[RMDB]
RNA sequence: GGGAACGACUCGAGUAGAGUCGAAAAUCGGCUGCGGUCUUCCACUUCUGCUGCCCCUUUUUCGGGUGCUUGGCGUGGGUCGGCUCAGGCCAGACGAUAGGAUGGCCAUCGGACCGAGCUAUCAUGACCACUCAGUAGUUUUCGAACUACUGAGUGGAAAAGAAACAACAACAACAAC
Reactivity to DMS in 0.01 (KOAc 150mM, MgCl2 10mM, bicine 150mM(pH8.5), 24C), signal-to-noise 5, nucleotides 027 to 126: u010c080g020g010c020u000g010c080g010g010u000c040u000u020c020c010a050c060u000u010c030u000g000c050u000g020c000c010c010c070u000u000u000u010u010c260g010g000g020u010g010c030u000u000g010g000c220g010u010g010g010g020u000c090g010g010c230u000c110a130g010g020c010c010a040g000a190c030g000a160u010a050g010g010a150u010g000g000c000c010a080u010c110g010g010a050c020c010g020a100g010c020u000a080u000c070a100u010g010a300
Reactivity to 2A3 in 0.01 (KOAc 150mM, MgCl2 10mM, bicine 150mM(pH8.5), 24C), signal-to-noise 5, nucleotides 027 to 126: u090c030g010g000c010u140g150c050g030g000u000c010u100u010c020c000a030c010u140u090c030u080g060c020u060g000c010c010c000c030u060u180u050u130u300c080g000g020g020u160g020c020u080u150g020g000c010g010u030g000g000g020u050c060g050g000c060u040c130a060g000g000c000c000a000g030a010c040g050a110u170a120g020g030a020u020g020g000c000c020a070u100c090g000g010a010c000c010g000a000g010c010u040a070u100c050a080u100g090a050